[RMDB]
RNA sequence: GGGAACGACUCGAGUAGAGUCGAAAAAGUGGUACCCACGAGAAAUCAAGUAUAUGGGCUAUGGGGAUAGUACGAUCGCAAGAUUGAAACUUGAAGAAAUUGACGGAAGGACACCACCAGGAGUGGACUCGCCUAUUCUAUUCGUAGAAUAGGCGAGAAAAGAAACAACAACAACAAC
Reactivity to 2A3 in 0.01 (KOAc 150mM, MgCl2 10mM, bicine 150mM(pH8.5), 24C), signal-to-noise 6, nucleotides 027 to 126: a000g090u080g000g030u080a050c000c040c000a020c030g060a050g060a030a170a020u090c070a040a030g110u060a130u080a090u280g040g020g020c030u010a040u080g130g040g010g020a000u020a030g070u070a080c030g040a030u030c020g000c050a050a010g000a040u030u100g040a130a070a010c030u030u050g050a050a020g070a040a130a060u140u160g030a010c030g060g000a030a030g040g010a020c010a000c070c000a000c000c010a030g060g070a040g060u050g010g010a020
Reactivity to DMS in 0.01 (KOAc 150mM, MgCl2 10mM, bicine 150mM(pH8.5), 24C), signal-to-noise 4, nucleotides 027 to 126: a080g040u010g000g010u000a120c040c010c020a100c140g000a150g000a090a090a080u000c060a100a070g000u020a130u030a070u030g020g020g000c030u020a050u000g000g010g000g010a060u000a010g000u010a080c050g020a020u010c050g000c190a080a120g000a040u010u020g010a090a080a040c040u000u000g000a070a060g000a060a050a060u020u010g000a080c070g020g000a140a100g000g000a120c120a060c000c000a010c000c040a100g010g010a130g020u000g000g010a220
Structure probing data (2A3 and DMS) for a 177-nucleotide construct. DMS adducts were read by reverse transcription with MarathonRT. For 2A3 the reverse transcriptase was SuperScript II with manganese. Source: RMDB libraries RFM100 and RFMREP, as collected in RNAgym.